[RMDB]
RNA sequence: GGGAACGACUCGAGUAGAGUCGAAAAUAGCCACACUCGCCGCACGGCGCUCACAUCGGCUGGAGCCAAACCAUUGAAGAAACAUGUCAAAGUCAGCGUCUGCCUCGUCAUCGUCAGUGGCGCUCUUAAUAAAUAGGCUAUUCGUAGCCUAUUUAUUAAAAGAAACAACAACAACAAC
Reactivity to 2A3 in 0.01 (KOAc 150mM, MgCl2 10mM, bicine 150mM(pH8.5), 24C), signal-to-noise 9, nucleotides 027 to 126: u100a010g030c010c000a040c000a010c020u040c030g040c020c010g050c020a040c050g020g000c010g010c010u030c010a080c000a080u090c040g040g000c020u030g040g030a030g030c020c020a070a040a060c030c010a080u060u150g060a080a050g050a080a120a040c070a090u150g040u140c070a130a060a030g040u040c020a010g020c010g030u020c030u040g030c010c000u030c020g060u030c020a070u040c040g090u030c040a040g010u030g050g010c010g000c010u010c000u010u000
Reactivity to DMS in 0.01 (KOAc 150mM, MgCl2 10mM, bicine 150mM(pH8.5), 24C), signal-to-noise 8, nucleotides 027 to 126: u030a110g010c010c000a080c110a110c090u000c050g010c020c040g030c070a050c070g010g000c050g010c060u000c050a040c090a090u010c090g010g010c030u000g010g010a120g000c040c030a050a100a110c080c050a050u020u010g000a090a090g010a110a110a090c110a050u020g000u010c060a050a100a080g000u000c070a030g000c040g010u020c020u010g000c040c010u000c040g010u010c040a030u000c050g000u000c080a060g010u000g010g000c070g010c030u010c030u000u010